The record gives the reactivity of an RNA of 177 nucleotides to 2A3 and DMS.
RNA sequence: GGGAACGACUCGAGUAGAGUCGAAAAUAUUUAAGGUCCCCAGGUCCUGCGGUGCGGGCGGGCGGUACUUUCCGUCAAGAAACAUCGGGGGCUCGGACGAGGUCCAUACUUUUGGUCCUGUCUUGGGAUGUCUUACAGGUUUCGACCUGUAAGACAUAAAAGAAACAACAACAACAAC
Reactivity to 2A3 in 0.01 (KOAc 150mM, MgCl2 10mM, bicine 150mM(pH8.5), 24C), signal-to-noise 4, nucleotides 027 to 126: u170a020u060u270u100a130a050g110g000u070c020c000c000c030a030g020g030u010c010c000u180g240c030g010g010u020g010c020g000g020g000c010g010g000g000c030g030g000u140a190c150u100u220u040c020c000g010u000c020a000a000g010a020a020a000c000a000u000c000g000g000g000g000g030c020u030c070g020g010a000c030g060a010g020g000u000c010c000a050u030a270c130u180u170u140u100g000g000u020c000c020u000g020u000c010u030u120g040g020g030
Reactivity to DMS in 0.01 (KOAc 150mM, MgCl2 10mM, bicine 150mM(pH8.5), 24C), signal-to-noise 4, nucleotides 027 to 126: u050a050u070u020u010a100a110g020g020u000c000c010c010c150a120g010g020u000c000c000u010g030c010g050g040u000g040c030g000g010g000c300g000g000g010c010g000g010u020a070c210u030u030u020c000c000g050u000c000a020a020g010a300a280a170c030a000u000c010g020g000g000g000g000c000u010c130g010g000a040c030g000a030g020g030u010c010c000a020u010a090c240u010u020u010u030g000g000u000c000c000u010g010u000c010u010u020g000g030g020
For 2A3 the reverse transcriptase was SuperScript II with manganese. The reactions ran in a buffer of 150 mM KOAc, 10 mM MgCl2 and 150 mM bicine (pH 8.5), at 24 C.